[RMDB]
RNA sequence: GGGAACGACUCGAGUAGAGUCGAAAACAUGGAGCCCCCGUUUAUGGAUCUAUUCAAGAUGAAAUCGUAGCAGCGUAUUCAUUGUUUAGGAUACAAGAUCUUUGUUUAGAUGAAGUAUUGAACAUCUUGGGGAAAUAUGGAAGAGAGUUCGAUCCUACAUCCUGCUAUCAUUCGUGAUAGCAGGAUGAAAAGAAACAACAACAACAAC
Reactivity to 2A3 in 0.01 (KOAc 150mM, MgCl2 10mM, bicine 150mM(pH8.5), 24C), signal-to-noise 2, nucleotides 027 to 156: c100a050u130g150g140a130g050c000c000c000c000c000g050u060u050u050a100u070g010g000a010u010c000u010a060u050u040c020a010a000g040a030u020g020a060a100a050u140c080g030u070a040g140c090a020g070c040g020u030a060u020u020c040a020u030u140g060u170u140u170a050g000g010a000u020a050c040a000a040g040a130u020c020u040u090u020g090u040u170u060a000g000a080u020g020a100a050g020u120a050u080u120g030a070a010c000a010u000c020u000u020g000g000g000g000a000a120a120u170a050u130g020g020a050a020g080a040g000a000g060u030u060c020g030a000u000c000c010u000a010
Reactivity to DMS in 0.01 (KOAc 150mM, MgCl2 10mM, bicine 150mM(pH8.5), 24C), signal-to-noise 1, nucleotides 027 to 156: c010a160u000g060g040a070g000c040c010c020c010c000g000u010u020u000a040u000g030g020a270u000c040u020a020u000u000c020a050a060g000a070u010g000a080a030a150u000c070g010u000a140g010c010a170g030c140g030u010a060u000u020c020a120u000u000g040u000u000u000a150g020g010a010u000a060c090a110a180g020a070u000c010u010u000u000g030u000u000u000a050g040a060u000g000a100a110g010u010a070u000u020g010a000a110c060a040u010c010u000u010g020g000g000g030a070a050a220u000a080u000g000g010a090a080g020a180g010a100g030u000u010c030g020a160u020c010c020u010a200
Source: RMDB library OK3TST, as collected in RNAgym.
Chemical mapping of a 207-nucleotide RNA with 2A3 and DMS.
DMS adducts were read by reverse transcription with MarathonRT.
The 2A3 profile rests on 677 reads.
The DMS profile rests on 1,904 reads.
2A3 adducts were read by reverse transcription with SuperScript II with manganese.